Notes
The record gives the reactivity of an RNA of 207 nucleotides to 2A3. For 2A3 the reverse transcriptase was SuperScript II with manganese.
[RMDB]
RNA sequence: GGGAACGACUCGAGUAGAGUCGAAAAUUUGGAUUCGUCCAAAAACUUGGGGUCUCUUGCGAGUCCGACGAUCAGUGAACUACUCCUGAAGCCUCCACGGGAGCACUGGGAGGACGAGCAAGAGACGGAGGCACCCUGCUACAUCGUUCGCGAUGAAGCUAUCGCCUUAGUUCGCUAAGGCGAUAGCAAAAGAAACAACAACAACAAC
Reactivity to 2A3 in 0.01 (KOAc 150mM, MgCl2 10mM, bicine 150mM(pH8.5), 24C), signal-to-noise 1, nucleotides 027 to 156: u040u000u000g010g000a020u130u010c140g030u060c000c010a030a000a030a080a030c050u140u150g000g000g040g000u000c010u030c020u020u000g000c000g000a010g030u000c020c000g060a160c020g000a050u000c000a010g010u000g040a050a090c070u090a080c000u300c000c000u000g030a050a000g020c000c000u000c000c000a050c000g020g000g000a000g110c000a000c000u020g000g000g000a040g000g000a000c010g020a030g000c000a000a000g000a000g000a000c000g000g000a010g010g000c000a010c000c000c020u050g030c020u050a070c000a030u000c030g080u110u090c250g000c000g160a000u080g140a040a000